[RMDB]
RNA sequence: GGGAACGACUCGAGUAGAGUCGAAAAACGUGUGAAUCUGCCAAAGUGAUACUUUCUCCAACUGUUACUUUUACUUCUUGAUUAUGCCAAGAAGGUAAGGUAUCAUGGCGAUUUACCAUAGCCAUGACUCGUACUAGGCCUUCGGGCCUAGUACGAGAAAAGAAACAACAACAACAAC
Reactivity to DMS in 0.01 (KOAc 150mM, MgCl2 10mM, bicine 150mM(pH8.5), 24C), signal-to-noise 1, nucleotides 027 to 126: a040c180g010u000g030u030g010a040a040u000c000u000g120c060c100a070a090a230g040u010g010a090u000a090c160u010u020u000c110u000c050c070a060a090c090u000g000u000u000a050c080u040u000u000u050a160c000u020u000c000u000u000g070a130u030u000a060u000g020c130c050a030a020g000a020a000g000g010u000a020a020g040g000u010a010u000c000a040u000g040g020c010g000a010u000u000u000a040c130c160a140u000a250g020c050c040a060u000g000a150
Reactivity to 2A3 in 0.01 (KOAc 150mM, MgCl2 10mM, bicine 150mM(pH8.5), 24C), signal-to-noise 2, nucleotides 027 to 126: a010c100g110u130g010u020g070a030a010u000c040u240g040c000c000a060a130a070g030u040g080a010u050a220c010u090u130u040c030u050c020c020a120a090c090u070g030u170u030a050c000u190u110u050u110a090c000u020u020c000u050u000g000a050u100u290a100u280g120c070c000a000a040g000a000a020g000g010u010a020a000g000g000u020a010u000c020a070u070g000g020c020g020a010u010u040u000a030c010c000a100u080a050g070c000c000a050u080g040a050
Chemical mapping of a 177-nucleotide RNA with DMS and 2A3.
Source: RMDB library OK2TST, as collected in RNAgym.
The DMS profile rests on 621 reads.
The reactions ran in a buffer of 150 mM KOAc, 10 mM MgCl2 and 150 mM bicine (pH 8.5), at 24 C.
Values cover nucleotides 27 to 126.